An RNA of 177 nucleotides, treated with 2A3 and DMS and read out base by base. The data come from the RNA Mapping Database (RMDB), library M2PK90. For 2A3, 9,331 sequencing reads were counted. DMS adducts were read by reverse transcription with MarathonRT. The RNA was probed in 150 mM KOAc, 10 mM MgCl2 and 150 mM bicine (pH 8.5) at 24 C.
RNA sequence: GGGAACGACUCGAGUAGAGUCGAAAAUCUAAGAGCGUAACACACACUCAGACUGUACGACUGUCUGACACACACAUACGCUAGUGUAUCGUGUGUGUGAUAUCGAUGUAGCACGAAAAUGAAAGAACACUAACUCAUUCUUCGGAAUGAGUUAGUGAAAAGAAACAACAACAACAAC
Reactivity to 2A3 in 0.01 (KOAc 150mM, MgCl2 10mM, bicine 150mM(pH8.5), 24C), signal-to-noise 7, nucleotides 027 to 126: u030c030u060a120a040g020a020g100c040g050u070a090a010c020a000c000a000c000a010c110u030c010a020g010a040c010u040g040u170a080c110g130a100c180u050g000u010c000u010g030a000c000a000c010a000c000a000c000a020u030a030c040g090c150u100a080g060u040g020u230a030u040c090g000u000g000u010g000u010g000u010g000a020u030a030u120c060g020a040u050g040u080a020g040c040a010c080g070a080a050a010a040u230g060a100a100a040g100a070a010
Reactivity to DMS in 0.01 (KOAc 150mM, MgCl2 10mM, bicine 150mM(pH8.5), 24C), signal-to-noise 7, nucleotides 027 to 126: u000c030u010a080a100g010a080g030c040g020u000a080a130c140a100c120a070c060a080c070u000c010a030g000a050c030u010g010u000a080c170g010a080c080u000g000u000c020u000g000a050c070a020c010a010c010a000c000a010u000a000c010g000c240u010a060g020u020g010u000a020u000c150g030u010g010u000g020u000g000u000g000a070u000a060u000c070g010a070u000g000u010a080g010c070a050c060g010a050a060a070a070u010g010a070a080a100g010a090a170